[RMDB]
RNA sequence: GGGAACGACUCGAGUAGAGUCGAAAAAUGCAUAGACAUUUAUAUUUGGUUUUUGGUGUCACUGAGCUCAUUCUGCUCAGCGGAUUGUCAGCUAUUGGAGAGAAAGAGCAUGGCAUUUGGCAUGUAAGAGUGAUUAUCGAUUCGUCGAUAAUCACUCAAAAGAAACAACAACAACAAC
Reactivity to 2A3 in 0.01 (KOAc 150mM, MgCl2 10mM, bicine 150mM(pH8.5), 24C), signal-to-noise 3, nucleotides 027 to 126: a020u040g000c070a110u130a170g050a080c010a050u060u160u050a260u040a100u040u110u130g110g020u100u070u010u060u120g070g000u030g010u010c030a010c050u010g000a010g010c020u020c080a140u210u040c070u110g040c000u000c020a010g000c000g020g030a060u060u090g060u060c020a030g020c030u030a090u140u140g030g010a090g020a020g030a070a100a020g040a010g050c080a120u030g000g000c030a030u070u010u080g030g020c000a000u030g030u120a110a070
Reactivity to DMS in 0.01 (KOAc 150mM, MgCl2 10mM, bicine 150mM(pH8.5), 24C), signal-to-noise 3, nucleotides 027 to 126: a010u000g000c010a110u000a180g020a120c020a010u000u010u000a130u010a060u030u000u010g020g010u000u000u000u010u000g010g020u000g000u010c040a140c060u010g010a030g010c030u000c110a150u000u000c120u020g030c000u000c050a050g010c120g000g030a110u010u000g020u000c040a080g020c040u010a080u000u010g020g010a110g000a110g020a070a040a060g000a100g000c040a060u000g000g000c050a080u000u000u010g010g000c050a030u000g020u000a050a150

Chemical mapping of a 177-nucleotide RNA with 2A3 and DMS. The DMS profile rests on 2,430 reads. For 2A3, 2,352 sequencing reads were counted. For DMS the reverse transcriptase was MarathonRT. High DMS reactivity at an A or C suggests that its Watson-Crick edge is free.